[RMDB]
RNA sequence: GGGAACGACUCGAGUAGAGUCGAAAAAUUUGUAUGUUUGAGAAUAAAACCACUUUGCCUACUAAUAUAGCUUUUGAACUCUAUGCUAAGCGUGCUGUACGCUCGCAUCCCGAUUUCAAAUUGCUACCACGCGUAUGGUUCGCCAUACGCAAAAGAAACAACAACAACAAC
Reactivity to DMS in 0.01 (KOAc 150mM, MgCl2 10mM, bicine 150mM(pH8.5), 24C), signal-to-noise 8, nucleotides 027 to 129: a000u050u030u030g030u040a070u030g040u020u010u050g020a060g040a100a070u000a050a020a040a060c090c120a070c040u000u000u000g030c000c020u030a120c050u020a120a120u060a130u000a000g000c000u040u010u010u020g040a000a010c020u010c010u040a050u020g020c040u000a090a030g030c010g030u020g080c250u070g040u000a040c050g040c000u040c300g040c020a030u000c230c090c200g020a040u000u000u000c030a030a030a020u060u050g060c040u000a000c130c040a080c130
Reactivity to 2A3 in 0.01 (KOAc 150mM, MgCl2 10mM, bicine 150mM(pH8.5), 24C), signal-to-noise 9, nucleotides 027 to 129: a000u090u060u060g040u040a160u060g080u030u150u170g110a100g070a110a080u150a110a080a030a020c040c030a060c020u040u050u080g010c000c010u040a050c020u040a070a090u140a070u040a100g000c000u010u010u000u000g000a000a000c010u000c020u030a020u020g000c010u050a090a030g000c000g040u050g090c140u200g090u140a000c010g000c010u020c040g000c010a020u010c060c070c040g020a000u000u000u020c010a010a020a030u100u090g000c000u040a090c020c040a080c070